Annotation
This 177-nucleotide RNA was probed chemically with DMS. DMS (dimethyl sulfate) methylates the pairing face of unpaired adenines and cytosines. The RNA was probed in 150 mM KOAc, 10 mM MgCl2 and 150 mM bicine (pH 8.5) at 24 C. Reactivities are given for positions 27 through 126.

RNA sequence: GGGAACGACUCGAGUAGAGUCGAAAAAGCACUAUGGAAUAGCGGAUGCGUCCAUUUGCACCUUCAUCCACAUCCGUGGCGGAUACCUGAAGGACCAUGGCACCAAUGCUGGCGUUUUCCGCCACCAAGCGGAUCCAUGAUUCGUCAUGGAUCCGCUAAAAGAAACAACAACAACAAC
Reactivity to DMS in 0.01 (KOAc 150mM, MgCl2 10mM, bicine 150mM(pH8.5), 24C), signal-to-noise 1, nucleotides 027 to 126: a070g000c050a080c260u000a080u010g010g000a080a050u000a170g040c030g000g080a100u040g000c040g000u000c010c040a050u000u000u000g010c020a080c050c000u000u000c030a030u000c020c200a060c150a130u000c050c050g000u000g020g020c070g100g060a060u000a110c100c110u000g000a010a090g000g020a130c090c020a040u010g000g010c040a010c270c120a130a090u000g000c080u000g000g030c120g010u000u000u000u020c100c010g020c010c020a030c090c160a050